[RMDB]
RNA sequence: GGGAACGACUCGAGUAGAGUCGAAAAACGACGUGAUAUACGUAUCACGUCGAUAAAUGAUGAUUCAAGAUAGGGACAACAGACUUUAAUUCAACUGUUGACAUAAUCGAUAGUAGAUCCUGAUAAACGUGAUUUGACAAUUCGUUGUCAAAUCACGAAAAGAAACAACAACAACAAC
Reactivity to DMS in 0.01 (KOAc 150mM, MgCl2 10mM, bicine 150mM(pH8.5), 24C), signal-to-noise 3, nucleotides 027 to 126: a120c010g000a000c000g040u000g030a030u000a010u000a150c130g010u000a000u010c000a000c000g010u010c000g050a010u020a040a090a070u000g040a170u020g000a050u040u010c060a110a110g010a140u000a100g000g000g000a120c040a000a040c010a010g000a140c280u010u000u040a070a050u010u010c260a070a090c000u000g020u000u010g000a050c050a070u020a050a010u000c030g020a040u010a130g010u010a070g010a070u000c000c020u010g000a070u050a050a050a110
Reactivity to 2A3 in 0.01 (KOAc 150mM, MgCl2 10mM, bicine 150mM(pH8.5), 24C), signal-to-noise 5, nucleotides 027 to 126: a000c010g000a000c000g000u000g030a000u000a000u000a060c240g060u000a010u010c000a000c000g000u000c000g000a000u010a010a060a030u080g050a030u040g030a010u040u070c040a040a010g050a100u070a060g140g000g060a030c010a020a000c000a010g060a120c030u210u180u230a130a130u190u190c030a100a040c050u000g010u000u010g010a000c000a010u200a080a050u100c010g020a000u030a070g070u020a030g010a060u030c030c000u150g030a180u220a040a080a000
Background
The data come from the RNA Mapping Database (RMDB), libraries RFM100 and RFMREP. An RNA of 177 nucleotides, treated with DMS and 2A3 and read out base by base. Reactivities are given for positions 27 through 126. 2A3 adducts were read by reverse transcription with SuperScript II with manganese. Values are in units of 0.01, from 0 to 300, in steps of 10.